[RMDB]
RNA sequence: GGGAACGACUCGAGUAGAGUCGAAAACAUCCAGUGUUCGCACUGGAUGAGAGGAUUGUGGAUCGGCAAACUACAUACCAAAAGCUGAGCUCGAAAGAGCAACGAUUUCGUCGUUCGCGACGAAAAACAAGGCCAAAGAAUUCGUUCUUUGGCCUUGAAAAGAAACAACAACAACAAC
Reactivity to 2A3 in 0.01 (KOAc 150mM, MgCl2 10mM, bicine 150mM(pH8.5), 24C), signal-to-noise 2, nucleotides 027 to 126: c000a000u000c000c000a000g000u000g020u050u090c180g070c070a010c000u010g000g000a000u000g010a010g000a000g000g030a160u110u080g020u050g040g070a140u060c040g070g050c030a010a140a050c040u100a030c000a090u120a120c010c020a070a080a000a020g070c080u090g040a020g000c020u010c010g030a090a030a020g020a010g000c040a000a030c020g060a080u010u000u010c000g000u000c010g010u010u070c190g000c010g060a010c000g000a000a000a020a010a010
Reactivity to DMS in 0.01 (KOAc 150mM, MgCl2 10mM, bicine 150mM(pH8.5), 24C), signal-to-noise 3, nucleotides 027 to 126: c020a030u000c000c000a010g010u000g000u000u020c180g010c020a010c000u000g000g000a000u010g000a070g010a080g010g000a170u010u000g020u000g010g010a070u000c010g010g020c080a040a110a070c070u000a040c050a050u000a160c050c030a050a060a060a100g000c060u020g010a250g010c000u020c010g000a060a060a160g000a010g020c030a040a040c220g000a150u000u000u000c000g010u000c000g020u000u010c210g010c010g000a010c000g000a000a010a050a090a180

Description: An RNA of 177 nucleotides, treated with 2A3 and DMS and read out base by base. Reactivities are given for positions 27 through 126. For 2A3, 3,152 sequencing reads were counted. Conditions: 150 mM KOAc, 10 mM MgCl2 and 150 mM bicine (pH 8.5), 24 C.